Structure probing data (DMS and 2A3) for a 177-nucleotide construct. The DMS profile rests on 1,224 reads. For DMS the reverse transcriptase was MarathonRT. The reactions ran in a buffer of 150 mM KOAc, 10 mM MgCl2 and 150 mM bicine (pH 8.5), at 24 C.
RNA sequence: GGGAACGACUCGAGUAGAGUCGAAAAGCGCGAUGGCAUUCGGUGACUAUCCAGCUGAGUACAACCCCAAGGUGCACGGGCCCUACGACCCCGCUCGCUUCUACGGCAAAGGUGAGCAGGUUACGUACAGUUCAUAUGCGUUCGCGCAUAUGAACUGAAAAGAAACAACAACAACAAC
Reactivity to DMS in 0.01 (KOAc 150mM, MgCl2 10mM, bicine 150mM(pH8.5), 24C), signal-to-noise 2, nucleotides 027 to 126: g010c020g030c230g010a060u010g020g000c100a090u010u000c080g000g010u000g020a120c060u000a040u000c040c060a250g000c060u000g010a160g000u000a050c240a110a110c100c010c010c070a090a100g010g020u000g010c020a060c090g000g010g010c040c040c030u000a030c010g000a160c290c000c000c050g030c030u010c000g030c010u010u000c070u010a070c090g000g020c060a110a120a060g000g000u000g000a000g010c020a010g000g000u000u000a060c060g010u010a070
Reactivity to 2A3 in 0.01 (KOAc 150mM, MgCl2 10mM, bicine 150mM(pH8.5), 24C), signal-to-noise 1, nucleotides 027 to 126: g030c020g050c040g040a020u070g000g040c030a040u010u090c070g270g070u070g030a090c020u030a060u060c020c030a000g000c020u000g020a030g050u110a060c050a040a080c010c010c000c020a010a070g070g000u030g020c020a010c040g000g030g020c010c020c010u000a020c000g040a020c020c000c010c020g000c000u020c010g000c000u030u000c020u080a070c040g070g000c020a100a070a050g080g000u010g000a000g000c000a000g040g030u060u090a050c030g020u040a070